[RMDB]
This 207-nucleotide RNA was probed chemically with DMS and 2A3. DMS (dimethyl sulfate) methylates the pairing face of unpaired adenines and cytosines. The 2A3 profile rests on 2,523 reads. The reactions ran in a buffer of 150 mM KOAc, 10 mM MgCl2 and 150 mM bicine (pH 8.5), at 24 C. 2A3 adducts were read by reverse transcription with SuperScript II with manganese. Source: RMDB library OK3TST, as collected in RNAgym.

RNA sequence: GGGAACGACUCGAGUAGAGUCGAAAAUUAACACCACAUGGAAGCCACCAAGGCUUAGGGCUUGUACUCUUCUGAAGCAAUGGCCCAAGCUAUACCUUGGCGCAUUUUCGCCAUGGCUGGAGUUGGAACAGCCACAAUGAAGGGUGCCAUGUCUGGACAUGGCGUGAUACUUCGGUAUCACGCCAUGAAAAGAAACAACAACAACAAC
Reactivity to DMS in 0.01 (KOAc 150mM, MgCl2 10mM, bicine 150mM(pH8.5), 24C), signal-to-noise 2, nucleotides 027 to 156: u000u000a100a110c040a190c020c000a050c020a060u000g020g050a080a160g000c030c010a100c020c150a120a210g010g030c030u000u000a110g040g000g000c020u010u010g060u010a010c000u020c060u010u000c100u000g010a140a040g050c050a080a120u000g000g000c030c010c010a050a070g000c060u010a120u000a020c050c010u000u010g020g020c040g000c150a140u000u000u020u000c020g030c020c020a110u000g010g000c020u010g030g010a100g030u000u000g000g010a140a130c040a070g010c030c010a030c050a070a080u010g010a090a070g000g030g010u000g010c030c020a060u010g030u000c000u010g000g020a300
Reactivity to 2A3 in 0.01 (KOAc 150mM, MgCl2 10mM, bicine 150mM(pH8.5), 24C), signal-to-noise 4, nucleotides 027 to 156: u090u020a070a020c040a050c040c030a020c010a030u030g030g030a070a050g030c030c000a050c030c030a110a090g020g000c010u040u020a170g000g020g000c020u050u070g030u110a100c020u020c060u240u080c110u180g140a110a020g020c050a050a100u080g040g010c000c000c010a000a000g010c000u070a040u090a190c010c040u010u020g010g000c020g040c030a040u100u100u090u160c030g000c020c010a040u050g000g010c010u010g000g030a110g050u080u090g060g070a070a010c020a010g020c000c010a050c060a050a100u190g040a060a030g050g010g010u020g010c010c030a030u090g020u000c030u010g000g000a030